Chemical mapping of a 177-nucleotide RNA with 2A3 and DMS. The RNA was probed in 150 mM KOAc, 10 mM MgCl2 and 150 mM bicine (pH 8.5) at 24 C. For 2A3 the reverse transcriptase was SuperScript II with manganese. The data come from the RNA Mapping Database (RMDB), library OK1LIB. DMS adducts were read by reverse transcription with MarathonRT. The 2A3 profile rests on 935 reads.

[RMDB]
RNA sequence: GGGAACGACUCGAGUAGAGUCGAAAAUUACUAUAACACCUACGAGGCGGGGAGAUGAUGUAGCUAUGAAGAUAUGCAAAGAUCUCAAGUUGUCUUCAGAGGGCUUUCUCUACAAGUUGACUGAGGAGGAGUACUCAAAGUUCGCUUUGAGUACUCCAAAAGAAACAACAACAACAAC
Reactivity to 2A3 in 0.01 (KOAc 150mM, MgCl2 10mM, bicine 150mM(pH8.5), 24C), signal-to-noise 2, nucleotides 027 to 126: u100u040a040c070u000a010u140a250a100c030a020c010c000u040a050c140g050a050g020g000c030g030g000g050g020a060g000a010u070g000a000u030g080u090a030g000c000u070a080u150g050a050a040g030a030u040a010u270g050c060a010a050a140g090a110u010c050u000c130a090a070g050u100u030g010u060c000u040u000c020a000g060a050g070g020g040c020u050u030u030c030u000c000u010a070c060a100a130g030u060u120g120a140c050u010g030a070g010g140a100
Reactivity to DMS in 0.01 (KOAc 150mM, MgCl2 10mM, bicine 150mM(pH8.5), 24C), signal-to-noise 2, nucleotides 027 to 126: u000u080a120c140u060a130u050a130a100c030a100c010c030u000a070c100g010a060g000g030c110g090g030g000g000a080g000a030u020g000a010u000g020u010a130g000c060u010a020u010g000a130a040g000a040u010a050u050g000c070a110a110a070g000a120u010c010u000c050a080a040g050u000u000g000u010c010u030u000c000a010g020a090g000g000g000c050u000u010u010c070u030c000u010a070c250a030a050g050u000u020g000a120c010u020g000a040g000g040a280